[RMDB]
The data come from the RNA Mapping Database (RMDB), library OK2TRN. Chemical mapping of a 177-nucleotide RNA with DMS. DMS adducts were read by reverse transcription with MarathonRT. The reactions ran in a buffer of 150 mM KOAc, 10 mM MgCl2 and 150 mM bicine (pH 8.5), at 24 C. Reactivities are given for positions 27 through 126.
RNA sequence: GGGAACGACUCGAGUAGAGUCGAAAAUUCUUCUGGAAGACUUCUUCAUCGCAGAGUUGAUUGAACCUUUACUUGUUCCAAACGGGAGUUGGACCAUAGUACUAAAUCUACCAACCGUUGGCCGAUGUGUCUACGACUAUUUCGAUAGUCGUAGACAAAAAGAAACAACAACAACAAC
Reactivity to DMS in 0.01 (KOAc 150mM, MgCl2 10mM, bicine 150mM(pH8.5), 24C), signal-to-noise 1, nucleotides 027 to 126: u000u020c040u010u010c090u010g000g040a070a080g000a130c170u000u000c020u000u000c080a020u000c040g020c070a080g000a080g010u000u000g000a110u000u010g010a040a070c120c120u000u010u000a040c040u000u000g000u000u010c030c020a020a060a120c110g020g040g000a170g060u020u000g000g010a050c040c020a030u000a030g000u000a100c120u000a040a050a060u000c020u000a030c020c030a030a070c030c000g010u010u000g030g040c170c060g000a090u010g020